This 177-nucleotide RNA was probed chemically with DMS.
[RMDB]
RNA sequence: GGGAACGACUCGAGUAGAGUCGAAAAGCUCAACAAGGGCGGUGACGCGCAGCACCUGGUCGGGGCGGGGCCCCACGGCCACCAGGCCGUGGUUGGCGAUCAGGGCGGCGGCGCGGCCCUCAAGCGCUAAACUCAUGCCAUUCGUGGCAUGAGUUUAAAAAGAAACAACAACAACAAC
Reactivity to DMS in 0.01 (KOAc 150mM, MgCl2 10mM, bicine 150mM(pH8.5), 24C), signal-to-noise 1, nucleotides 027 to 126: g010c020u010c020a010a070c300a110a040g010g020g020c010g030g000u000g020a070c010g020c000g000c020a050g010c000a140c010c020u000g000g000u000c010g020g000g020g020c190g000g000g010g020c010c010c010c020a040c030g000g030c010c020a130c300c270a140g010g050c000c000g010u010g000g020u020u010g020g010c000g000a000u000c020a020g000g000g020c000g000g000c040g000g010c010g030c000g030g020c010c010c010u000c030a050a220g000c150g000c090
Notes: DMS adducts were read by reverse transcription with MarathonRT. It was measured as part of the RMDB library OK2TRN. The reactions ran in a buffer of 150 mM KOAc, 10 mM MgCl2 and 150 mM bicine (pH 8.5), at 24 C. Reactivities are given for positions 27 through 126.